[RMDB]
RNA sequence: GGGAACGACUCGAGUAGAGUCGAAAAGGUUCCGUCUUCGGACGGAACCAAACAUAGUAUACCCUGUUGCUUGUAUACUAUGAUAUACCGUAAUGCAACGGAAAAUGCCUAGUUUCGACUAGGCAAAGGUUGUAAGUUGAUUCGUCAACUUACAACCAAAAGAAACAACAACAACAAC
Reactivity to DMS in 0.01 (KOAc 150mM, MgCl2 10mM, bicine 150mM(pH8.5), 24C), signal-to-noise 2, nucleotides 027 to 126: g010g010u000u000c020c000g030u000c000u010u000c200g040g000a020c000g010g000a010a000c000c000a010a030a070c000a010u000a020g010u000a010u000a010c000c060c070u000g000u000u000g010c020u010u000g010u000a010u010a010c000u000a000u010g010a040u010a120u000a130c020c010g030u010a080a060u000g020c040a020a020c020g000g000a060a070a120a090u000g000c000c000u010a010g020u000u000u020c160g010a010c000u000a000g000g020c000a000a000a030
Reactivity to 2A3 in 0.01 (KOAc 150mM, MgCl2 10mM, bicine 150mM(pH8.5), 24C), signal-to-noise 2, nucleotides 027 to 126: g000g000u000u000c000c000g000u010c000u030u070c230g090g000a000c000g010g000a010a000c000c010a000a000a000c000a000u010a000g010u010a000u000a000c010c040c140u110g010u030u020g010c000u000u020g000u010a010u000a010c010u010a000u010g020a000u020a020u020a060c010c010g010u060a100a060u190g020c000a010a010c000g090g060a060a100a020a090u070g000c000c000u000a010g000u010u020u090c200g050a020c000u010a000g030g010c010a000a000a010